[RMDB]
Source: RMDB library OK2TRN, as collected in RNAgym. Structure probing data (2A3 and DMS) for a 177-nucleotide construct. Reactivities are given for positions 27 through 126. The reactions ran in a buffer of 150 mM KOAc, 10 mM MgCl2 and 150 mM bicine (pH 8.5), at 24 C. 2A3 is a SHAPE reagent: it acylates the 2'-hydroxyl of flexible nucleotides of all four kinds. DMS adducts were read by reverse transcription with MarathonRT.
RNA sequence: GGGAACGACUCGAGUAGAGUCGAAAAAUGGCGCUGUUAGGCUGCGAUGGCUGCCGGUUGCUAGUCGGGGGCUGAUGAUAUGGCCGGUGGUAUGGAUCAGCCGCCCGGUCAGCCUAGAAGGCGGACCCAGCUCAUCCACUUUCGAGUGGAUGAGCUGAAAAGAAACAACAACAACAAC
Reactivity to 2A3 in 0.01 (KOAc 150mM, MgCl2 10mM, bicine 150mM(pH8.5), 24C), signal-to-noise 1, nucleotides 027 to 126: a010u150g180g000c020g000c030u020g090u120u000a020g030g030c040u030g020c010g040a060u130g030g020c000u040g040c030c000g010g020u090u170g050c020u010a010g100u200c020g000g040g000g010g000c010u010g010a010u000g000a020u050a100u300g060g030c010c060g000g000u020g020g060u230a190u300g140g030a010u010c000a000g000c000c010g150c020c010c000g010g020u090c010a000g000c040c000u010a050g070a150a050g060g000c000g000g000a020c000c000
Reactivity to DMS in 0.01 (KOAc 150mM, MgCl2 10mM, bicine 150mM(pH8.5), 24C), signal-to-noise 2, nucleotides 027 to 126: a070u010g020g000c040g000c040u000g020u020u000a000g020g020c010u000g010c130g000a140u030g010g000c000u010g010c010c020g000g010u010u010g040c030u000a110g020u020c020g010g000g000g000g000c000u000g000a020u000g000a210u010a120u000g000g020c020c000g000g010u000g020g040u020a120u000g000g000a060u010c020a020g010c020c010g000c000c010c020g030g010u010c000a010g010c000c040u000a030g000a100a190g020g000c010g030g010a160c010c000